Conditions: 150 mM KOAc, 10 mM MgCl2 and 150 mM bicine (pH 8.5), 24 C. The record gives the reactivity of an RNA of 177 nucleotides to DMS and 2A3. For 2A3 the reverse transcriptase was SuperScript II with manganese. In probing experiments dimethyl sulfate is read out at A N1 and C N3, which are open when not base-paired. DMS adducts were read by reverse transcription with MarathonRT.

RNA sequence: GGGAACGACUCGAGUAGAGUCGAAAAACGAGUUACGACUCGACUGCUAUCCGCUAAACGGGAAGCCCGUGUCGCGGAAGGUUUUCCUGCAUCGUAUCGAGUGAAGCACUCGUCAAGGUGAAGCGAAAAAUUUUCUUCUGUUCGCAGAAGAAAAUUUAAAAGAAACAACAACAACAAC
Reactivity to DMS in 0.01 (KOAc 150mM, MgCl2 10mM, bicine 150mM(pH8.5), 24C), signal-to-noise 7, nucleotides 027 to 126: a110c020g010a020g020u010u010a090c120g010a030c010u000c000g000a170c090u030g010c030u020a110u000c010c010g010c010u000a160a160a040c010g000g010g030a220a190g030c080c010c010g000u000g000u030c300g020c010g000g000a030a300g000g000u000u010u000u000c020c000u000g010c000a010u000c030g010u010a190u020c000g000a020g000u010g010a130a140g020c110a050c000u000c010g000u010c120a130a240g000g010u010g000a090a070g000c110g010a030a070
Reactivity to 2A3 in 0.01 (KOAc 150mM, MgCl2 10mM, bicine 150mM(pH8.5), 24C), signal-to-noise 8, nucleotides 027 to 126: a000c010g010a000g020u050u090a070c220g050a030c090u000c010g060a050c050u040g000c010u060a110u080c000c000g000c010u030a090a090a050c010g010g020g200a230a090g130c020c000c000g010u010g000u020c010g000c000g000g000a010a020g010g000u030u030u040u050c000c010u010g030c010a020u010c020g020u060a010u040c010g000a000g010u040g090a220a040g130c060a010c010u010c010g040u030c060a050a020g010g000u050g030a060a020g050c080g160a130a100